[RMDB]
RNA sequence: GGGAACGACUCGAGUAGAGUCGAAAAGAUAUGGAGUCGGUAUACAGCAACAGCUCGGAAACGAGACAUGCUGAUACCCGACUCCUAAGUCAAAACGACUCGUCAAAGUUCGCUUUGACGAGUCGAACAUCGGCAAUAAGUUCGCUUAUUGCCGAUGAAAAGAAACAACAACAACAAC
Reactivity to 2A3 in 0.01 (KOAc 150mM, MgCl2 10mM, bicine 150mM(pH8.5), 24C), signal-to-noise 2, nucleotides 027 to 126: g020a010u070a060u160g010g000a010g000u000c000g020g010u010a040u060a160c000a000g000c010a010a140c030a220g040c000u010c010g000g010a070a080a050c000g010a000g030a040c030a050u050g000c000u010g000a010u000a010c020c000c010g000a000c000u000c000c000u000a010a000g000u000c010a010a010a060a110c020g010a000c000u010c000g000u000c000a000a000a040g020u080u110c230g030c200u000u010u000g000a030c000g000a000g000u000c000g000a000a000
Reactivity to DMS in 0.01 (KOAc 150mM, MgCl2 10mM, bicine 150mM(pH8.5), 24C), signal-to-noise 4, nucleotides 027 to 126: g000a030u000a300u000g000g000a030g020u000c010g000g000u000a030u010a100c010a010g010c000a020a060c300a160g010c000u010c000g010g000a060a070a200c010g000a010g010a090c060a190u010g020c000u020g000a040u000a000c080c010c040g000a000c000u000c000c000u000a000a050g000u000c030a070a060a090a230c030g010a020c000u000c000g020u000c010a010a030a020g030u000u010c230g000c010u000u000u000g000a010c000g020a020g010u000c000g000a030a080

Chemical mapping of a 177-nucleotide RNA with 2A3 and DMS. For DMS, 3,421 sequencing reads were counted. High DMS reactivity at an A or C suggests that its Watson-Crick edge is free. The 2A3 profile rests on 5,927 reads. It was measured as part of the RMDB library TTRDEL.